[RMDB]
RNA sequence: GGGAACGACUCGAGUAGAGUCGAAAAGGAGUACAAGGCGGGGAUUCUUCAAUCGCAUGGCGCGGUUCCAACGGCGAGACGGCAUGCCGUCGCGGUGGACCUGCGCGACGACUGGCCGGCCGCGCUGUCGGAGCUGUUAAUUCGUUAACAGCUCCGAAAAAGAAACAACAACAACAAC
Reactivity to 2A3 in 0.01 (KOAc 150mM, MgCl2 10mM, bicine 150mM(pH8.5), 24C), signal-to-noise 3, nucleotides 027 to 126: g040g020a030g020u070a020c060a120a040g020g020c010g030g000g000g010a030u060u050c010u090u070c040a050a120u060c020g030c110a090u080g060g010c020g000c020g010g000u080u020c060c020a090a020c020g130g000c030g010a010g010a040c010g000g030c020a010u120g010c020c000g000u000c000g000c000g000g070u100g060g050a080c000c030u070g020c000g000c000g000a010c000g000a010c020u040g160g000c000c000g000g030c000c000g050c020g000c020u020g030
Reactivity to DMS in 0.01 (KOAc 150mM, MgCl2 10mM, bicine 150mM(pH8.5), 24C), signal-to-noise 2, nucleotides 027 to 126: g000g020a060g020u010a060c120a070a090g010g050c050g000g010g010g010a020u000u000c030u000u010c100a050a080u010c050g010c080a100u060g010g000c050g000c010g010g010u010u000c100c080a060a120c030g040g000c030g000a110g000a090c000g000g000c010a160u010g000c020c020g000u010c000g010c000g010g000u030g000g000a070c080c000u010g000c000g000c020g000a030c000g000a030c040u010g030g030c010c020g010g000c060c020g000c020g030c040u010g000